Chemical mapping of a 177-nucleotide RNA with DMS and 2A3.
The RNA was probed in 150 mM KOAc, 10 mM MgCl2 and 150 mM bicine (pH 8.5) at 24 C.
The DMS profile rests on 1,370 reads.
2A3 adducts were read by reverse transcription with SuperScript II with manganese.
The 2A3 profile rests on 1,582 reads.
Source: RMDB library RFMREP, as collected in RNAgym.
[RMDB]
RNA sequence: GGGAACGACUCGAGUAGAGUCGAAAAAUGCGUGGUUUGCGGCCCUAAUUUAUUCAGCACGCGACUGCCGCAUCCCGCACGGGAGGCGCAGCUGCUGCAUGACGCUUUAACGUCGCAGCUCACCACCACACUAGGGAAGGUUCGCCUUCCCUAGUGUAAAAGAAACAACAACAACAAC
Reactivity to DMS in 0.01 (KOAc 150mM, MgCl2 10mM, bicine 150mM(pH8.5), 24C), signal-to-noise 2, nucleotides 027 to 126: a080u010g000c140g060u030g030g000u000u000u000g020c000g030g010c000c240c180u000a020a030u010u000u000a110u010u010c030a020g010c010a040c200g030c030g000a030c010u000g000c070c060g000c000a060u000c000c000c010g010c290a060c180g030g000g010a000g010g020c010g000c010a010g010c020u000g000c000u010g000c030a050u000g020a040c300g000c150u000u000u000a090a150c190g000u010c020g020c040a020g010c040u000c040a030c010c020a060c040c040
Reactivity to 2A3 in 0.01 (KOAc 150mM, MgCl2 10mM, bicine 150mM(pH8.5), 24C), signal-to-noise 2, nucleotides 027 to 126: a000u130g010c080g020u020g000g050u060u030u050g030c010g000g020c020c050c010u070a060a040u080u080u150a160u070u080c030a010g000c010a010c090g010c020g030a050c010u040g110c150c050g030c000a010u020c000c000c000g160c060a080c050g020g010g000a010g010g040c010g000c000a000g000c020u050g000c010u000g000c110a240u060g020a010c040g000c140u170u050u100a060a020c020g000u010c000g020c000a000g000c000u020c020a010c020c000a030c010c020